[RMDB]
RNA sequence: GGGAACGACUCGAGUAGAGUCGAAAAGUCACGUUGGCUAAUGAACUUGAACGACGUGAGUUGGAAUACAUGGAAACUGAUGAGUUCAAGAACAAGUAUAUGAUCAAGGAUGAAAGCAAAUUGGUCAGGAUUUAUGAGUCUUCGGACUCAUAAAUCCAAAAGAAACAACAACAACAAC
Reactivity to 2A3 in 0.01 (KOAc 150mM, MgCl2 10mM, bicine 150mM(pH8.5), 24C), signal-to-noise 1, nucleotides 027 to 126: g050u050c010a020c180g040u070u080g050g000c070u080a130a070u150g080a090a040c000u060u010g060a110a000c000g200a030c070g050u070g090a050g020u010u050g100g160a060a020u070a130c070a080u130g000g150a070a070a000c040u090g020a050u030g040a070g040u000u030c010a000a000g000a010a010c010a040a020g090u080a090u000a070u300g000a000u050c000a090a000g070g050a010u300g160a170a040a000g120c090a000a000a100u040u000g010g000u000c030a060
Reactivity to DMS in 0.01 (KOAc 150mM, MgCl2 10mM, bicine 150mM(pH8.5), 24C), signal-to-noise 2, nucleotides 027 to 126: g000u030c010a030c130g030u010u000g000g000c100u010a060a150u000g010a090a210c060u020u010g010a050a060c000g000a080c110g020u010g030a060g000u010u010g000g010a160a100u040a120c210a080u000g020g010a110a100a040c030u000g000a060u010g000a220g000u000u000c020a000a060g000a040a110c080a120a180g000u010a050u010a110u020g000a060u000c010a020a020g010g010a120u030g020a150a070a050g000c100a010a080a220u000u000g000g000u000c030a040
An RNA of 177 nucleotides, treated with 2A3 and DMS and read out base by base. Source: RMDB library OK2TST, as collected in RNAgym. The DMS profile rests on 870 reads. Conditions: 150 mM KOAc, 10 mM MgCl2 and 150 mM bicine (pH 8.5), 24 C.